[RMDB]
RNA sequence: GGGAACGACUCGAGUAGAGUCGAAAACUCGAGGAGCAUAGAGGCGUGCGAACUCGACAUGAAUCAGCCUCGAUUAGAAGGUACUCGUGAGAGCGAAGUACCGAGAAUUGGUCGACGAUCACCGGCGAUCUUGCGACCUUGAAUUAAGCCGGUAAAACCAUGGAUGCAUCUUCGGAUGCAUCCAUGGAAAAGAAACAACAACAACAAC
Reactivity to 2A3 in 0.01 (KOAc 150mM, MgCl2 10mM, bicine 150mM(pH8.5), 24C), signal-to-noise 2, nucleotides 027 to 156: c030u020c000g000a000g040g010a070g050c010a000u040a040g000a000g010g000c000g020u000g000c000g070a160a000c000u000c040g040a010c040a160u300g060a090a210u120c020a030g000c000c000u000c000g020a100u110u150a050g120a090a040g000g010u000a000c000u000c000g030u030g050a200g020a020g000c070g020a080a000g000u000a000c000c000g000a000g000a030a160u170u200g000g000u010c000g000a080c040g000a000u050c010a010c130c000g020g000c010g000a000u000c000u010u120g060c000g000a000c000c000u020u060g040a100a030u050u090a110a000g000c000c000g000g000u010a050a030a000a060
Reactivity to DMS in 0.01 (KOAc 150mM, MgCl2 10mM, bicine 150mM(pH8.5), 24C), signal-to-noise 1, nucleotides 027 to 156: c060u000c020g030a180g020g000a190g010c040a080u000a140g000a050g020g040c040g010u000g000c050g000a160a190c040u000c020g040a150c050a130u020g000a080a030u010c090a160g020c040c010u050c000g000a210u000u020a110g010a170a300g000g020u000a010c010u000c000g000u000g000a300g000a300g000c010g040a080a150g030u000a000c000c010g000a020g000a080a080u020u010g010g010u000c000g000a050c200g000a050u000c040a010c130c030g000g060c070g000a040u000c000u010u010g010c000g000a070c000c010u000u000g000a050a150u000u000a070a060g000c000c020g050g000u000a000a040a020a110
The data come from the RNA Mapping Database (RMDB), library OK3TST. The record gives the reactivity of an RNA of 207 nucleotides to 2A3 and DMS. For DMS, 1,346 sequencing reads were counted. For 2A3, 928 sequencing reads were counted. 2A3 adducts were read by reverse transcription with SuperScript II with manganese. Conditions: 150 mM KOAc, 10 mM MgCl2 and 150 mM bicine (pH 8.5), 24 C. High 2A3 reactivity points to a flexible backbone, as in loops and unpaired stretches.